[RMDB]
RNA sequence: GGGAACGACUCGAGUAGAGUCGAAAAUAGCCGCCGCAGUCGCGACGUAGAACGCGGCGUCGUAGCCUGUUACCGUCGCCCCACCCGGCAGCGUAUAGGGGCCGAGGUUGACAACCGCGCCAGCCGCGGUGCACCAGGGUUUCGACCCUGGUGCACCAAAAGAAACAACAACAACAAC
Reactivity to 2A3 in 0.01 (KOAc 150mM, MgCl2 10mM, bicine 150mM(pH8.5), 24C), signal-to-noise 2, nucleotides 027 to 126: u140a050g100c040c010g030c030c010g020c020a020g010u060c030g020c050g040a050c130g020u070a110g060a140a020c060g040c060g000g040c000g000u000c020g050u020a060g010c000c000u050g050u070u020a050c040c050g040u020c060g000c000c000c000c000a020c000c000c020g000g030c040a020g030c000g010u050a030u190a270g050g010g010g000c010c040g050a110g020g070u030u070g010a020c000a020a000c010c030g010c000g020c030c000a010g000c030c000g000c030
Reactivity to DMS in 0.01 (KOAc 150mM, MgCl2 10mM, bicine 150mM(pH8.5), 24C), signal-to-noise 1, nucleotides 027 to 126: u010a070g000c040c000g000c070c060g020c010a110g000u060c040g000c020g000a050c000g000u000a130g000a010a150c100g020c020g000g010c000g000u000c130g030u000a100g000c040c000u070g000u000u040a060c160c000g000u040c100g000c000c030c020c010a190c080c080c020g060g000c120a080g040c010g010u050a010u040a090g000g000g070g000c030c000g040a100g000g030u010u080g010a120c080a090a250c050c010g040c040g010c000c230a030g040c030c000g000c130
Chemical mapping of a 177-nucleotide RNA with 2A3 and DMS. DMS (dimethyl sulfate) methylates the pairing face of unpaired adenines and cytosines. It was measured as part of the RMDB library OK1LIB. Values cover nucleotides 27 to 126. Conditions: 150 mM KOAc, 10 mM MgCl2 and 150 mM bicine (pH 8.5), 24 C.